[RMDB]
RNA sequence: GGGAACGACUCGAGUAGAGUCGAAAAGGGGCAUAUUUUUUCCCUCAGAUAUAGCGUAAUGAUGAGAGCCAUCUUAAACUAUGCUCUUCGGUCUUCAAGCCUGUCAUACUGACUCGUCUUGAGCGAAAGCACUGAAUGCCUUCGGGCAUUCAGUGCUAAAAGAAACAACAACAACAAC
Reactivity to 2A3 in 0.01 (KOAc 150mM, MgCl2 10mM, bicine 150mM(pH8.5), 24C), signal-to-noise 1, nucleotides 027 to 126: g070g040g000g000c150a030u120a060u090u120u000u000u020u000c070c000c000u040c010a070g090a020u210a000u030a090g010c070g140u080a000a170u190g080a010u010g040a040g000a060g300c080c060a050u000c000u030u130a000a000a000c000u080a000u060g000c000u000c090u040u000c000g000g080u000c040u010u040c000a000a000g000c000c000u000g000u080c000a050u100a280c050u080g000a000c000u020c030g070u060c000u000u000g000a000g000c070g120a080a050